[RMDB]
RNA sequence: GGGAACGACUCGAGUAGAGUCGAAAAGAUAUGGAAAAUGCGUAACGGUGUACUUUGGGAGCACACCAGUCGGAAACGACUGGGUGCGAGGAUCAAACAUGUACACCGUUACGCAUUUUCCUAAGUCGUAUUACCCAGUGUUCGCACUGGGUAAUACAAAAGAAACAACAACAACAAC
Reactivity to DMS in 0.01 (KOAc 150mM, MgCl2 10mM, bicine 150mM(pH8.5), 24C), signal-to-noise 2, nucleotides 027 to 126: g020a100u000a300u010g010g000a030a020a010a000u000g020c010g020u000a010a020c000g010g020u010g010u000a010c020u010u000u000g020g010g020a090g020c000a010c000a170c000c000a000g020u000c000g020g000a100a080a260c020g010a010c020u000g010g000g030u000g010c000g010a050g020g000a060u010c020a020a050a100c300a090u010g020u000a010c010a010c010c000g010u010u000a000c010g000c010a000u000u000u000u000c000c000u000a010a050g000u010c120